RNA sequence: GGGAACGACUCGAGUAGAGUCGAAAAUGAAAGCUCUCUCUAACAUUGCGACGCUGGAGGAACUGGUACUUGAUCAUGCACGGGAAGUAUGUUGCAUACCGUCAUUUUCCUGUCUGCCGCGUCUUCGUGCAGGAUGUAUCUUCGGAUACAUCCUGCAAAAAGAAACAACAACAACAAC
Reactivity to DMS in 0.01 (KOAc 150mM, MgCl2 10mM, bicine 150mM(pH8.5), 24C), signal-to-noise 2, nucleotides 027 to 126: u090g010a210a060a050g000c090u000c010u000c040u000c100u040a120a210c060a220u000u000g010c170g070a090c130g000c040u000g100g000a110g000g010a090a070c100u000g000g000u030a060c030u010u010g000a020u020c170a040u000g040c160a070c040g000g000g080a120a070g030u000a040u040g000u040u040g000c140a030u020a040c170c100g040u000c080a030u000u040u000u000c000c000u020g000u010c040u020g000c020c040g010c210g000u000c000u010u000c100g030
Reactivity to 2A3 in 0.01 (KOAc 150mM, MgCl2 10mM, bicine 150mM(pH8.5), 24C), signal-to-noise 2, nucleotides 027 to 126: u090g040a070a080a010g050c040u000c030u050c040u000c040u000a000a000c030a160u020u110g050c050g030a010c010g020c050u120g010g020a030g000g020a080a050c060u050g000g000u060a000c000u000u010g030a040u060c100a040u000g020c040a000c020g070g000g000a110a050g020u210a210u230g170u180u090g060c000a020u050a160c000c040g030u030c000a050u000u000u020u030c000c010u000g090u030c040u100g080c000c000g000c000g000u000c000u090u070c010g040
Background:
Chemical mapping of a 177-nucleotide RNA with DMS and 2A3. The 2A3 profile rests on 1,549 reads. 2A3 is a SHAPE reagent: it acylates the 2'-hydroxyl of flexible nucleotides of all four kinds. Conditions: 150 mM KOAc, 10 mM MgCl2 and 150 mM bicine (pH 8.5), 24 C. For DMS, 1,722 sequencing reads were counted. Source: RMDB library OK1LIB, as collected in RNAgym.